[RMDB]
RNA sequence: GGGAACGACUCGAGUAGAGUCGAAAAGGAUCUUACUAUCAUGUGGAGGAGAUUCCACAUGCACAUAACUAAUGUUACUAUCAUGUGGAGGAGAUUCCACAUGCACAAGUCUCCUUGUGAUAGUAACUUCCCUUGUGAUAGUAAGAUCAAAGGGAAGGUGUAUGUUGCUAUUCGUAGCAACAUAUACAAAAGAAACAACAACAACAAC
Reactivity to 2A3 in 0.01 (KOAc 150mM, MgCl2 10mM, bicine 150mM(pH8.5), 24C), signal-to-noise 9, nucleotides 027 to 156: g130g000a000u000c000u000u000a000c010u020a020u110c000a010u030g010u010g040g010a030g100g080a160g050a180u140u020c010c010a000c010a010u040g080c030a040c010a070u240a100a050c060u100a230a070u170g000u010u010a000c000u020a010u050c000a010u040g070u150g210g040a010g040g030a070g020a050u140u010c080c030a090c040a130u120g030c020a030c010a060a040g030u020c020u010c040c000u040u080g010u000g010a020u020a010g000u000a000a000c000u000u020c000c000c000u020u060g060u010g020a030u030a020g000u000a000a000g000a010u010c010a020a050a030g110g010g050a100a080g100
Reactivity to DMS in 0.01 (KOAc 150mM, MgCl2 10mM, bicine 150mM(pH8.5), 24C), signal-to-noise 5, nucleotides 027 to 156: g030g010a040u000c010u000u010a030c010u010a070u000c000a040u000g030u010g010g000a070g020g010a280g030a290u000u000c010c020a020c010a040u000g020c130a090c140a050u000a030a050c030u010a130a110u010g000u010u000a020c020u000a080u000c000a020u000g030u010g080g010a040g010g010a120g000a170u000u000c030c040a050c060a180u000g010c030a070c050a030a060g020u000c030u000c020c010u000u000g010u000g010a040u000a040g000u000a020a050c000u000u000c010c010c020u010u020g030u000g010a090u000a050g010u000a020a040g000a050u000c020a030a030a050g010g010g010a080a060g010
Chemical mapping of a 207-nucleotide RNA with 2A3 and DMS. It was measured as part of the RMDB library OK3TST. DMS adducts were read by reverse transcription with MarathonRT.